[RMDB]
The record gives the reactivity of an RNA of 177 nucleotides to 2A3 and DMS. The RNA was probed in 150 mM KOAc, 10 mM MgCl2 and 150 mM bicine (pH 8.5) at 24 C. The DMS profile rests on 1,486 reads. Values cover nucleotides 27 to 126. 2A3 adducts were read by reverse transcription with SuperScript II with manganese.
RNA sequence: GGGAACGACUCGAGUAGAGUCGAAAAGAUAUGGAAUCCCAUGGCAAGGCGCUCGGAAACGAGACGCUGAUGACCCAUAAGGGAUUCCUAAGUCAAAGGCCGUUUAUCCUUCGGGAUAAACGGCCAACUUAUAGCUGGAGUUCGCUCCAGCUAUAAGAAAAGAAACAACAACAACAAC
Reactivity to 2A3 in 0.01 (KOAc 150mM, MgCl2 10mM, bicine 150mM(pH8.5), 24C), signal-to-noise 1, nucleotides 027 to 126: g000a040u060a030u170g010g020a000a010u000c010c000c030a000u020g020g020c050a070a200g010g000c010g010c010u020c050g000g050a090a080a050c030g030a040g070a160c020g000c010u000g000a020u110g020a040c040c020c020a030u130a250a300g030g010g000a010u010u020c000c000u020a180a020g030u020c090a200a040a040g000g000c000c040g020u020u010u010a000u000c040c010u000u130c300g100g000g000a010u020a040a010a000c040g090g030c000c000a000a010
Reactivity to DMS in 0.01 (KOAc 150mM, MgCl2 10mM, bicine 150mM(pH8.5), 24C), signal-to-noise 2, nucleotides 027 to 126: g000a030u000a300u010g010g010a000a010u000c000c000c010a100u000g000g000c010a090a100g000g020c010g010c000u010c000g000g000a090a090a170c010g000a020g000a140c010g020c010u000g000a030u010g000a120c300c000c040a010u010a150a090g000g000g000a010u000u000c010c000u000a020a130g010u000c030a080a070a080g020g000c000c000g000u000u000u000a000u000c010c000u000u000c200g010g010g020a010u000a000a000a000c000g000g000c000c020a000a020